[RMDB]
RNA sequence: GGGAACGACUCGAGUAGAGUCGAAAAAUUUUGCGCACCUUAUCGAAAGCCUUUGCAUUAGCUGGUUUACGUUGUGGCUUUACCCUGGCGAACAGCGAUAUCAUCCAAUUGCUGCUUAAAGUGAUUGAAUACUUGGCGGAUUCGUCCGCCAAGUAUUAAAAGAAACAACAACAACAAC
Reactivity to DMS in 0.01 (KOAc 150mM, MgCl2 10mM, bicine 150mM(pH8.5), 24C), signal-to-noise 2, nucleotides 027 to 126: a140u000u010u000u000g010c040g030c050a100c030c030u010u020a100u000c100g000a110a090a130g000c030c050u000u000u000g020c060a140u000u020a050g010c070u000g000g010u010u010u000a070c100g040u010u000g010u010g030g010c040u000u000u040a180c050c010c000u030g020g010c060g000a050a060c020a060g000c000g050a050u000a070u000c060a110u000c110c010a030a130u000u000g000c000u000g000c140u000u000a030a100a070g020u000g000a060u000u000g000

Structure probing data (DMS) for a 177-nucleotide construct. The DMS profile rests on 1,261 reads. For DMS the reverse transcriptase was MarathonRT. The RNA was probed in 150 mM KOAc, 10 mM MgCl2 and 150 mM bicine (pH 8.5) at 24 C. It was measured as part of the RMDB library OK2TRN.